[RMDB]
RNA sequence: GGGAACGACUCGAGUAGAGUCGAAAACUGCAGGUCAACGGUACUUCUUCAGAUCAGCUAUUGCAGAAGAAAGGUGACCCAAGCGCUCUGGGCCAGUGCGACUGUAUAUAGGAGCUUGUCAUUUUAACCAGAAGCUAACUCUCUCCGAAACAAUGAGGUGGUUUUAAUGAUUCGUCAUUAAAACCACAAAAGAAACAACAACAACAAC
Reactivity to DMS in 0.01 (KOAc 150mM, MgCl2 10mM, bicine 150mM(pH8.5), 24C), signal-to-noise 1, nucleotides 027 to 156: c040u000g020c010a080g030g040u010c030a030a080c020g010g030u040a050c020u000u000c050u000u000c030a120g020a220u040c000a120g060c080u000a150u030u000g010c050a120g000a050a090g030a050a090a090g020g000u000g010a100c000c000c030a090a070g030c070g040c040u010c020u040g010g030g030c110c040a070g040u010g010c050g000a170c070u010g030u000a130u010a150u010a060g000g000a000g020c020u000u010g010u000c020a100u000u000u000u010a100a100c070c030a090g010a070a090g000c010u000a030a060c050u010c050u000c010u000c010c030g010a120a100a040c050a040a060u000g000a190g000
Reactivity to 2A3 in 0.01 (KOAc 150mM, MgCl2 10mM, bicine 150mM(pH8.5), 24C), signal-to-noise 3, nucleotides 027 to 156: c030u040g040c020a040g010g010u020c020a070a060c060g060g000u030a020c040u020u030c010u050u050c020a010g020a300u050c020a030g100c040u130a090u220u120g000c010a000g000a030a000g000a020a100a000g010g030u010g030a010c000c020c000a090a030g030c020g000c040u060c030u070g020g030g000c010c050a040g030u040g060c040g050a050c050u030g090u110a050u010a040u100a250g070g040a010g030c020u060u020g020u060c030a100u070u090u060u110a030a080c000c000a000g010a070a010g000c020u050a050a010c030u000c010u010c000u000c080c020g080a130a130a050c040a050a110u150g010a050g100
This 207-nucleotide RNA was probed chemically with DMS and 2A3. For 2A3, 1,263 sequencing reads were counted. Source: RMDB library OK3TST, as collected in RNAgym.